[RMDB]
RNA sequence: GGGAACGACUCGAGUAGAGUCGAAAAAGGAUCGCGCAGGAUCCUAGUACAGUACGUACGUCAGUACGAGUACGUACGCUAGAGUACUACAGUACGAUCGUACCGUCAGUCGUACACUGCUAGUCUCCCUUACUACCGGCUUCGGCCGGUAGUAAGGAAAAGAAACAACAACAACAAC
Reactivity to DMS in 0.01 (KOAc 150mM, MgCl2 10mM, bicine 150mM(pH8.5), 24C), signal-to-noise 2, nucleotides 027 to 126: a030g000g000a000u000c020g010c220g000c090a090g010g020a010u000c000c000u000a000g010u010a050c050a160g010u000a010c020g010u000a010c010g010u050c060a130g000u000a070c150g000a110g000u000a050c000g000u000a000c010g010c230u000a080g000a280g000u010a020c010u000a040c240a090g030u000a010c000g000a040u000c100g020u020a110c160c210g000u000c030a100g000u010c010g000u000a020c000a050c070u000g000c050u000a140g000u000c080u000c040
Reactivity to 2A3 in 0.01 (KOAc 150mM, MgCl2 10mM, bicine 150mM(pH8.5), 24C), signal-to-noise 2, nucleotides 027 to 126: a000g030g000a000u010c010g020c050g040c220a000g050g030a000u000c010c000u010a000g000u010a000c050a020g000u010a010c010g020u000a000c020g160u020c070a020g100u100a100c130g000a010g020u030a030c000g000u000a000c020g000c030u140a030g010a040g160u070a060c000u020a030c020a040g010u000a010c010g000a050u070c040g050u080a200c070c040g110u080c040a050g000u000c000g000u010a020c030a040c030u040g000c010u030a050g070u000c070u040c080

Source: RMDB library OK2TRN, as collected in RNAgym. The record gives the reactivity of an RNA of 177 nucleotides to DMS and 2A3. The DMS profile rests on 1,755 reads. DMS adducts were read by reverse transcription with MarathonRT.